[RMDB]
The data come from the RNA Mapping Database (RMDB), library OK1LIB. Chemical mapping of a 177-nucleotide RNA with DMS and 2A3. The RNA was probed in 150 mM KOAc, 10 mM MgCl2 and 150 mM bicine (pH 8.5) at 24 C. For DMS the reverse transcriptase was MarathonRT. For 2A3 the reverse transcriptase was SuperScript II with manganese. Values cover nucleotides 27 to 126.
RNA sequence: GGGAACGACUCGAGUAGAGUCGAAAAUGGGGAUAUGCACACACAUGAGGUGGCAGAGGCUGCAUGCACGACCAUACUUUGCAGUUUGGAAUGGAGAAUGGGAACUAUCGGAAAUGUGCUUUAUUGGCAACCCGUGCACUUUCGAGUGCACGGGUUGAAAAGAAACAACAACAACAAC
Reactivity to DMS in 0.01 (KOAc 150mM, MgCl2 10mM, bicine 150mM(pH8.5), 24C), signal-to-noise 2, nucleotides 027 to 126: u010g000g020g010g000a140u030a010u110g000c020a050c000a150c190a040c130a100u030g020a230g030g000u000g030g000c090a070g000a060g040g030c030u020g040c050a080u000g030c130a090c030g040a100c050c000a100u000a110c100u000u000u000g010c060a090g010u010u000u000g020g020a150a000u000g000g000a040g020a140a010u000g020g000g000a000a100c070u000a170u010c100g000g000a030a070a040u010g010u000g000c030u000u100u000a060u010u010g000g000
Reactivity to 2A3 in 0.01 (KOAc 150mM, MgCl2 10mM, bicine 150mM(pH8.5), 24C), signal-to-noise 2, nucleotides 027 to 126: u110g000g020g000g080a000u050a040u230g100c090a000c000a000c000a000c000a070u080g030a040g060g050u090g000g030c000a000g000a000g040g000c000u010g000c000a030u040g000c070a060c050g110a040c040c030a010u030a090c020u030u050u140g050c020a060g060u040u110u200g180g030a140a140u100g000g030a040g030a110a090u060g040g000g000a000a040c010u010a090u060c010g050g030a010a140a020u130g000u000g000c000u000u110u030a180u050u070g100g000